Annotation: The record gives the reactivity of an RNA of 177 nucleotides to 2A3 and DMS. For 2A3 the reverse transcriptase was SuperScript II with manganese. The RNA was probed in 150 mM KOAc, 10 mM MgCl2 and 150 mM bicine (pH 8.5) at 24 C. For 2A3, 7,316 sequencing reads were counted. For DMS, 2,782 sequencing reads were counted. High DMS reactivity at an A or C suggests that its Watson-Crick edge is free. DMS adducts were read by reverse transcription with MarathonRT.

[RMDB]
RNA sequence: GGGAACGACUCGAGUAGAGUCGAAAAGCCUAACAGUUCGCUGUUAGGCAAAUGCACAGACUUCGCAUCUGUGAAAAACACAACAGAAGUGUCUAUGCGAGGAUCGUUGCGUCUUCGGACGCAACAAGAGUAACAACCAGUUCGCUGGUUGUUACUCAAAAGAAACAACAACAACAAC
Reactivity to 2A3 in 0.01 (KOAc 150mM, MgCl2 10mM, bicine 150mM(pH8.5), 24C), signal-to-noise 5, nucleotides 027 to 126: g010c000c000u000a000a000c010a000g050u090u090c160g070c110u010g000u010u000a010g000g000c000a020a010a030u080g000c010a020c000a030g030a030c020u040u020c030g010c020a030u010c020u030g050u020g060a080a000a000a000a000c070a030c040a100a080c060a090g170a300a030g180u040g030u050c050u090a030u040g010c010g010a020g040g040a110u120c110g010u000u000g000c000g000u000c000u020u010c110g120g000a000c020g000c000a000a000c000a010a010
Reactivity to DMS in 0.01 (KOAc 150mM, MgCl2 10mM, bicine 150mM(pH8.5), 24C), signal-to-noise 3, nucleotides 027 to 126: g000c010c000u000a000a010c010a010g030u010u010c240g010c000u000g000u010u000a000g000g040c000a000a020a010u010g030c030a040c050a030g000a040c020u000u000c050g000c090a100u000c030u010g020u000g000a020a030a070a090a080c050a050c070a090a090c170a090g010a070a060g030u000g000u010c070u000a020u000g000c020g000a070g000g010a120u020c140g010u000u000g010c000g000u000c000u010u020c170g000g000a000c020g010c000a000a000c000a080a050